[RMDB]
RNA sequence: GGGAACGACUCGAGUAGAGUCGAAAAGAUAUGGAGGCGAAUUCCGAAACUUCAUCGAUCUAUAGAACUACUUUCUCGGAAACGAGAAAGCUAUAGGGAGAAGAUAAGGAAUUCGCCUCCUAAGUCAGCUAGGGUAUUAGUUCGCUAAUACCCUAGCAAAAGAAACAACAACAACAAC
Reactivity to DMS in 0.01 (KOAc 150mM, MgCl2 10mM, bicine 150mM(pH8.5), 24C), signal-to-noise 1, nucleotides 027 to 126: g000a000u000a300u000g000g010a000g000g020c010g000a020a000u000u000c020c000g000a170a220a250c000u000u000c030a280u000c150g010a060u000c000u000a030u000a000g010a120a040c130u010a300c000u010u000u000c000u000c020g010g010a080a090a120c030g000a000g000a000a030a000g030c010u000a000u000a010g000g000g000a100g000a020a000g000a020u010a080a300g000g000a000a000u000u020c000g020c000c000u000c000c010u000a030a040g000u000c040a110